[RMDB]
RNA sequence: GGGAACGACUCGAGUAGAGUCGAAAACUAGACGGGUUCGCCCGUCUAGAAACGGUGCGAAUAGGGGGCUUCGCCUCCGGCCCAGCCCUUCCGCUGACCCCCAAAGCUCAACCUUCGGGUUGAGCAACCUGGAAUUUAAGUUCGCUUAAAUUCCAGGAAAAGAAACAACAACAACAAC
Reactivity to DMS in 0.01 (KOAc 150mM, MgCl2 10mM, bicine 150mM(pH8.5), 24C), signal-to-noise 3, nucleotides 027 to 126: c010u000a000g000a010c010g000g000g030u010u020c220g010c000c000c010g000u010c000u000a000g000a030a100a070c100g000g020u000g010c030g000a060a050u000a090g020g000g010g000g010c200u000u000c150g010c000c030u000c060c030g020g010c030c020c050a130g000c020c010c050u000u000c050c020g010c080u010g000a280c040c010c000c020c040a100a100a110g000c000u000c010a000a010c000c000u000u020c190g030g010g010u000u000g000a010g010c000a010a010
Reactivity to 2A3 in 0.01 (KOAc 150mM, MgCl2 10mM, bicine 150mM(pH8.5), 24C), signal-to-noise 2, nucleotides 027 to 126: c010u010a000g000a000c000g010g040g030u060u070c140g100c040c010c010g000u020c000u000a000g000a000a010a010c050g020g020u050g040c050g060a100a110u160a300g050g000g000g000g000c000u010u050c040g050c010c070u000c080c020g020g030c000c000c000a010g000c000c000c010u060u020c070c010g060c110u120g180a220c000c010c000c000c030a020a080a030g000c000u020c010a000a000c000c010u040u020c210g100g000g000u000u000g010a000g000c010a010a000